[RMDB]
RNA sequence: GGGAACGACUCGAGUAGAGUCGAAAAGCGGGGCUUGAACCGCGGGUAGCGCGCACGCCCGGCGAAGAAGUUCGCAUACGCGGUGUGCUGGUGCCGAAGUGUCUGCUGCAACGGCACGCUCGACACCUAGAACAUACCGUAUUCGUACGGUAUGUAACCUCGUAAUCCUAUUCGUAGGAUUACGAGGAAAAGAAACAACAACAACAAC
Reactivity to DMS in 0.01 (KOAc 150mM, MgCl2 10mM, bicine 150mM(pH8.5), 24C), signal-to-noise 2, nucleotides 027 to 156: g020c040g020g000g010g030c090u000u010g000a110a060c030c020g050c030g030g030g030u000a050g020c020g020c060g010c040a090c000g010c010c010c040g000g010c010g010a040a090g030a160a160g000u010u000c010g060c010a110u010a250c040g000c060g110g000u010g000u000g020c020u000g000g020u000g090c000c010g000a050a100g000u000g010u000c050u000g050c100u000g040c170a180a260c100g010g000c000a050c010g020c120u000c000g020a020c010a040c010c010u010a130g010a150a070c000a010u010a000c000c000g020u000a030u010u010c230g020u000a020c010g010g010u000a000u010g010u010a030a090
Reactivity to 2A3 in 0.01 (KOAc 150mM, MgCl2 10mM, bicine 150mM(pH8.5), 24C), signal-to-noise 4, nucleotides 027 to 156: g010c000g010g000g030g030c070u100u170g070a080a060c030c020g000c080g000g020g010u080a040g060c060g000c020g000c060a010c000g010c010c000c030g020g000c020g000a020a020g060a060a030g180u030u010c010g020c040a020u050a240c060g020c130g050g000u000g000u010g000c050u040g010g010u000g000c000c010g040a060a020g010u010g020u020c060u090g070c050u150g040c060a140a060c050g020g000c000a000c020g010c060u010c010g020a010c000a020c030c020u030a040g050a140a000c000a000u000a000c010c000g000u000a010u000u060c090g020u020a000c010g000g010u000a000u000g000u010a010a040